[RMDB]
RNA sequence: GGGAACGACUCGAGUAGAGUCGAAAAGAUAUGGAGUCCAAUAGGGAGAGGGUCGGAAACGACCCAUCGAGGAUCUAUGGACUCCUAAGUCAAAAGUAUCAAUGACCGUUCGCGGUCAUUGAUACAAGUUAGUUAAAUACUUCGGUAUUUAACUAACAAAAGAAACAACAACAACAAC
Reactivity to 2A3 in 0.01 (KOAc 150mM, MgCl2 10mM, bicine 150mM(pH8.5), 24C), signal-to-noise 2, nucleotides 027 to 126: g030a020u060a050u160g010g010a000g000u000c020c030a180a290u020a040g000g030g000a020g000a000g020g000g000u000c000g010g030a050a060a070c010g000a000c000c020c040a040u010c010g000a130g030g010a020u020c010u000a020u010g000g000a000c000u010c000c000u000a070a010g040u000c010a020a030a060a120g000u020a000u000c000a000a010u010g020a010c000c030g020u060u090c300g040c010g120g000u000c000a000u010u000g010a000u010a000c000a000a000
Reactivity to DMS in 0.01 (KOAc 150mM, MgCl2 10mM, bicine 150mM(pH8.5), 24C), signal-to-noise 3, nucleotides 027 to 126: g000a030u000a300u000g000g000a010g000u000c000c000a050a100u010a010g010g000g000a050g010a030g020g000g010u000c000g010g010a080a100a160c000g000a010c010c000c010a010u000c010g010a080g010g010a040u000c000u000a010u000g000g000a000c000u000c000c000u000a010a040g000u010c030a070a090a120a130g010u000a000u000c010a010a020u000g000a010c000c000g040u000u020c260g030c020g000g010u000c000a000u000u010g000a020u000a000c000a040a080